[RMDB]
RNA sequence: GGGAACGACUCGAGUAGAGUCGAAAAUCGGAAUACAUCGGAAUACGGCUUCAAAAACUGGAAACCACUAACAAUAUCUUCUCAUUUCAAAAUUGAAAGUCUUUCUAGUGAUACGAAGGUAUGGUCCAAAUGGUAAUGAUUUCGAUCAUUACCAUUUAAAAGAAACAACAACAACAAC
Reactivity to 2A3 in 0.01 (KOAc 150mM, MgCl2 10mM, bicine 150mM(pH8.5), 24C), signal-to-noise 9, nucleotides 027 to 126: u070c030g040g070a090a020u130a120c070a080u100c050g020g020a030a010u070a060c040g060g000c020u020u020c040a050a040a030a050a030c010u030g020g010a010a020a020c050c030a030c050u070a070a030c040a050a030u050a120u100c080u230u050c090u050c090a190u070u230u120c120a160a170a110a080u040u050g060a120a030a010g020u000c020u000u040u010c010u020a020g010u010g070a020u030a150c050g010a010a010g040g020u050a060u110g060g030u020c010c010
Reactivity to DMS in 0.01 (KOAc 150mM, MgCl2 10mM, bicine 150mM(pH8.5), 24C), signal-to-noise 9, nucleotides 027 to 126: u030c050g000g010a120a090u030a070c120a090u020c060g000g020a100a050u010a150c060g010g000c010u010u000c040a070a090a050a120a040c040u000g000g000a040a060a060c130c190a040c060u010a030a220c040a020a030u000a040u010c070u010u010c070u010c080a080u010u020u020c140a030a050a080a040u000u010g000a030a100a030g000u000c260u000u000u010c010u000a040g010u020g000a080u010a060c140g000a080a050g000g010u000a020u020g000g000u010c030c040